The record gives the reactivity of an RNA of 207 nucleotides to 2A3 and DMS. It was measured as part of the RMDB library M2RFPK. The reactions ran in a buffer of 150 mM KOAc, 10 mM MgCl2 and 150 mM bicine (pH 8.5), at 24 C. For 2A3, 4,075 sequencing reads were counted.
[RMDB]
RNA sequence: GGGAACGACUCGAGUAGAGUCGAAAAAGAUCCACGCUACGGCGUGGAUCACACGUUCAUCCCUACUGGGACGGAAGUAGGCAUAGUGCCGAAGGAACGCAUUAGUCAUGCGCUACGGCGCAUGACACACAUCAGAGUCACUUCGGUGACUCUGAAACUUAAAUUCAGAGUUCGCUCUGAAUUUAAGAAAAGAAACAACAACAACAAC
Reactivity to 2A3 in 0.01 (KOAc 150mM, MgCl2 10mM, bicine 150mM(pH8.5), 24C), signal-to-noise 4, nucleotides 027 to 156: a000g010a000u010c000c000a010c000g000c010u040a040c260g130g000c000g000u000g010g000a000u000c000a000c000a000c000g010u010u000c010a010u030c010c010c000u140a220c180u300g010g000g010a010c010g020g020a010a020g000u020a010g000g000c040a100u140a260g150u200g130c000c000g010a000a000g020g010a010a020c020g000c040a060u080u150a040g010u000c000a000u000g000c010g000c000u020a040c300g070g000c000g000c000a000u000g000a000c010a000c000a010c000a090u040c000a000g000a000g000u000c000a000c000u060u120c200g100g000u000g000a000c000u020c000u000g000a000a000a000
Reactivity to DMS in 0.01 (KOAc 150mM, MgCl2 10mM, bicine 150mM(pH8.5), 24C), signal-to-noise 2, nucleotides 027 to 156: a110g000a050u000c000c000a020c040g000c010u000a090c280g030g040c010g020u010g020g000a010u000c010a010c080a020c060g010u000u000c010a220u000c020c010c030u000a090c110u000g060g000g000a040c010g030g010a070a090g020u000a100g000g000c070a220u000a080g000u000g050c040c020g000a100a100g000g000a090a100c090g000c060a090u000u000a110g000u000c050a030u000g010c000g010c000u000a090c270g050g050c030g000c000a000u000g010a010c000a000c040a070c130a050u000c000a020g000a020g030u000c000a010c000u000u010c300g010g010u000g000a000c010u000c000u010g000a010a050a040